Structure probing data (DMS and 2A3) for a 177-nucleotide construct. Reactivities are given for positions 27 through 126. Conditions: 150 mM KOAc, 10 mM MgCl2 and 150 mM bicine (pH 8.5), 24 C. DMS adducts were read by reverse transcription with MarathonRT. It was measured as part of the RMDB library OK2TRN. 2A3 adducts were read by reverse transcription with SuperScript II with manganese. The DMS profile rests on 1,298 reads.
[RMDB]
RNA sequence: GGGAACGACUCGAGUAGAGUCGAAAAGGUAGGGUUUCCCAACUUCAGCAGGUUGACAUUUUGGGCCAUAAAAUUGUGUGAUUGUCAUCUAUGUUAUAGAAUGUUUCUAGUAUCCUUGGCCUCUACCGGUAGAAUAGCUGUUCGCAGCUAUUCUACCAAAAGAAACAACAACAACAAC
Reactivity to DMS in 0.01 (KOAc 150mM, MgCl2 10mM, bicine 150mM(pH8.5), 24C), signal-to-noise 1, nucleotides 027 to 126: g010g000u020a040g010g000g000u000u010u000c000c000c000a170a060c090u000u000c120a080g020c070a020g000g020u000u030g030a070c050a050u000u000u000u010g020g000g030c010c030a080u010a080a050a130a090u000u010g000u010g020u030g000a060u010u000g020u000c030a060u010c010u000a020u020g010u010u000a070u010a080g000a030a100u010g010u010u010u020c030u000a100g010u010a040u010c080c090u000u010g000g010c010c000u020c060u000a020c060c020
Reactivity to 2A3 in 0.01 (KOAc 150mM, MgCl2 10mM, bicine 150mM(pH8.5), 24C), signal-to-noise 1, nucleotides 027 to 126: g050g000u030a000g000g050g020u030u000u060c020c010c000a070a030c040u130u120c000a050g000c030a000g110g050u060u030g020a000c030a080u080u070u130u230g060g020g000c010c010a080u130a070a250a110a150u280u160g060u020g000u040g130a090u000u110g010u010c000a030u060c030u060a130u050g140u190u130a190u040a270g090a100a100u120g090u020u060u040c030u070a040g020u100a100u020c000c000u010u010g060g030c020c030u000c000u080a010c000c050